[RMDB]
RNA sequence: GGGAACGACUCGAGUAGAGUCGAAAACACGCCGCAUUUCCUAGGCAAGUCAUAAGGCGAUUAAAUAAGAACUGCCAGUUUUCAUCUCGCAAGGUAUCAGAUGAGUCAGGAGACUCGUGCAAGGUCGUGUCGCAGUUAGAUUCGUCUAACUGCGACAAAAAGAAACAACAACAACAAC
Reactivity to DMS in 0.01 (KOAc 150mM, MgCl2 10mM, bicine 150mM(pH8.5), 24C), signal-to-noise 2, nucleotides 027 to 126: c060a030c040g000c050c000g010c110a100u010u010u010c000c060u020a030g070g000c030a080a070g000u000c040a020u060a160a170g000g010c090g010a040u020u050a040a070a130u050a100a300g010a120a060c010u010g010c010c010a150g000u000u010u030u020c010a060u020c020u000c010g000c010a060a060g000g030u000a040u000c100a060g000a050u020g030a100g000u000c020a130g020g000a140g030a020c060u000c020g020u010g020c050a130a040g000g000u000c090g000
Reactivity to 2A3 in 0.01 (KOAc 150mM, MgCl2 10mM, bicine 150mM(pH8.5), 24C), signal-to-noise 4, nucleotides 027 to 126: c070a000c020g000c000c000g060c090a080u040u060u000c020c000u010a030g060g000c050a080a020g050u070c040a080u070a280a050g030g030c000g050a060u170u160a020a090a120u190a050a030g070a100a050c000u010g000c020c000a000g020u020u000u000u120c050a070u000c060u000c000g030c030a030a040g080g050u090a070u130c040a010g070a190u060g020a070g030u000c050a010g040g160a120g030a040c000u020c020g050u110g000c000a040a170g050g020u070c050g020
Overview:
Chemical mapping of a 177-nucleotide RNA with DMS and 2A3. Values cover nucleotides 27 to 126. It was measured as part of the RMDB library OK1LIB.